Structure probing data (2A3) for a 207-nucleotide construct.
The data come from the RNA Mapping Database (RMDB), library OK3TST.
RNA sequence: GGGAACGACUCGAGUAGAGUCGAAAAUCAUCUGGCGAGGUGCGCGUAGCUACCGAACGGGAGGAUGUCGCAUACCUUAGCGGAAUCCCAAUCAACCGCACGUAUUUCGGCAAAGUCGAGGGACUCCCGGAAAAGCAAAAGGACACGAUGUAUAUUGCCGUUAGGUGUAGUUCGCUACACCUAACGGAAAAGAAACAACAACAACAAC
Reactivity to 2A3 in 0.01 (KOAc 150mM, MgCl2 10mM, bicine 150mM(pH8.5), 24C), signal-to-noise 1, nucleotides 027 to 156: u100c010a000u010c050u070g060g010c050g010a010g040g000u010g010c010g020c010g080u100a060g040c030u160a170c010c020g090a130a050c040g020g030g020a030g060g000a050u080g080u080c020g000c000a010u060a150c000c030u050u050a020g000c020g030g000a010a010u060c000c020c030a000a100u130c020a000a070c020c000g030c000a030c070g020u070a100u040u060u060c020g010g000c000a050a090a030g070u080c040g060a120g020g020g000a020c000u030c000c000c020g010g020a100a130a000a000g070c060a020a070a020a020g000g030a060c020a030c070g040a080u060g060u080a090u040a030u070u240g030

The reactions ran in a buffer of 150 mM KOAc, 10 mM MgCl2 and 150 mM bicine (pH 8.5), at 24 C.